[RMDB]
RNA sequence: GGGAACGACUCGAGUAGAGUCGAAAAUUCUCAGAAUCCAGCGAGAGGCGUAGGAGAGAGGGCCGCGGUGCUCUGGAGUAGAGGCUUCUUGCUUCGAAACACCAUCGAUCGUCCCUUCUUCUUUUACCUUCUCCUGGCUCUUCGAGUGAGACGCGACCAUAGAAGAUAGGUUCGCCUAUCUUCUAUGAAAAGAAACAACAACAACAAC
Reactivity to 2A3 in 0.01 (KOAc 150mM, MgCl2 10mM, bicine 150mM(pH8.5), 24C), signal-to-noise 4, nucleotides 027 to 156: u070u010c000u010c000a030g040a040a090u300c010c000a070g000c090g040a000g000a000g020g030c180g040u010a000g020g010a010g000a000g000a010g000g000g000c000c000g030c010g010g000u010g000c000u000c000u010g010g000a000g000u000a000g000a010g010g000c030u170u050c080u280u300g000c000u000u000c010g010a000a010a000c010a030c090c000a000u010c010g050a300u020c010g000u010c000c000c000u020u030c020u040u010c000u000u010u000u000a000c000c000u000u010c000u010c010c000u000g000g000c000u020c000u000u010c000g000a030g020u070g030a110g010a030c050g050c040g110a040c000
Reactivity to DMS in 0.01 (KOAc 150mM, MgCl2 10mM, bicine 150mM(pH8.5), 24C), signal-to-noise 2, nucleotides 027 to 156: u010u000c000u030c000a190g030a140a090u010c010c010a070g040c050g000a060g030a050g020g030c080g060u000a050g000g010a090g020a160g000a060g020g020g060c090c050g030c030g000g000u000g010c040u000c010u000g020g030a250g000u000a190g000a040g020g000c030u000u010c280u000u000g040c010u000u000c000g020a300a190a300c020a030c140c000a040u000c000g010a100u010c020g010u000c010c000c010u000u000c010u000u000c000u010u000u000u000a030c030c020u000u000c030u000c010c000u010g020g000c020u000c010u000u000c060g010a200g020u000g000a080g000a160c110g010c040g000a150c170